Conditions: 150 mM KOAc, 10 mM MgCl2 and 150 mM bicine (pH 8.5), 24 C.
Structure probing data (DMS and 2A3) for a 170-nucleotide construct.
For DMS the reverse transcriptase was MarathonRT.
It was measured as part of the RMDB library 15KLIB.
RNA sequence: GGGAACGACUCGAGUAGAGUCGAAAAACUUGGAGCACAGGGGUCCAGUUCAGUCCGUGGGAUUACCCCGGAUCUCCCGUUCUCCACACUCCUUCCCCCCCCGGGCUCCUCCAAUAAAAAGGAAAGAUGACACGCCGCUUCGGCGGCGUGAAAAGAAACAACAACAACAAC
Reactivity to DMS in 0.01 (KOAc 150mM, MgCl2 10mM, bicine 150mM(pH8.5), 24C), signal-to-noise 2, nucleotides 027 to 129: a300c120u020u020g000g000a000g040c200a060c000a000g000g060g000g000u020c090c090a090g000u000u100c150a150g070u010c000c140g000u090g000g000g000a300u010u010a120c150c170c000c010g000g010a000u000c030u030c000c110c020g020u050u000c000u000c000c000a080c260a080c140u050c010c020u010u060c100c090c060c000c010c080c010c000g150g000g000c070u000c060c000u000c000c000a030a100u010a000a040a040a050a160g060g000a000a150a230g000a160u010g070a230
Reactivity to 2A3 in 0.01 (KOAc 150mM, MgCl2 10mM, bicine 150mM(pH8.5), 24C), signal-to-noise 2, nucleotides 027 to 129: a000c040u040u020g000g000a020g040c070a000c000a100g000g000g000g000u000c000c000a100g060u190u200c000a080g000u060c000c000g140u280g030g060g070a300u180u300a300c000c000c000c000g020g000a010u000c010u000c020c040c000g000u020u000c000u000c000c000a110c000a000c070u110c000c090u000u000c000c000c000c000c000c000c000c000g000g000g000c050u000c040c000u070c000c000a120a000u230a080a150a000a000a000g040g020a070a000a000g150a050u040g000a000